RNA sequence: GGGAACGACUCGAGUAGAGUCGAAAACUCAAGGAUGUCUCUGUCACCGAGGGCAUGCCCGCUCAGUUUAAGACGACGGUGACCGGCAAAGUGAAAGCCACCAGCGUCCAAUGGUUCCGCGAGGGUCACCCUCCUGGUAUUUCGAUACCAGGAGGGUAAAAGAAACAACAACAACAAC
Reactivity to 2A3 in 0.01 (KOAc 150mM, MgCl2 10mM, bicine 150mM(pH8.5), 24C), signal-to-noise 1, nucleotides 027 to 126: c020u040c050a010a050g050g000a030u090g050u030c010u010c030u140g050u010c050a000c040c010g030a100g000g000g000c060a060u120g120c010c030c020g040c030u110c060a050g010u020u070u100a110a040g090a040c100g010a010c000g000g040u000g010a020c030c050g030g000c030a030a100a090g080u140g110a150a000a010g000c020c010a020c010c000a030g020c010g010u010c020c000a040a090u120g050g060u080u030c030c000g030c010g020a060g030g000g050u080c010
Reactivity to DMS in 0.01 (KOAc 150mM, MgCl2 10mM, bicine 150mM(pH8.5), 24C), signal-to-noise 2, nucleotides 027 to 126: c040u000c060a110a130g030g000a090u000g000u000c020u010c100u030g000u020c040a020c020c000g020a110g020g000g000c060a040u000g000c030c070c050g010c130u000c060a100g000u000u000u000a120a130g020a060c000g000a090c000g000g010u000g020a020c030c190g020g010c090a040a110a170g020u000g010a110a100a120g000c060c020a070c030c050a050g000c040g000u000c040c010a080a090u000g000g020u030u000c000c020g010c120g000a080g000g000g000u000c100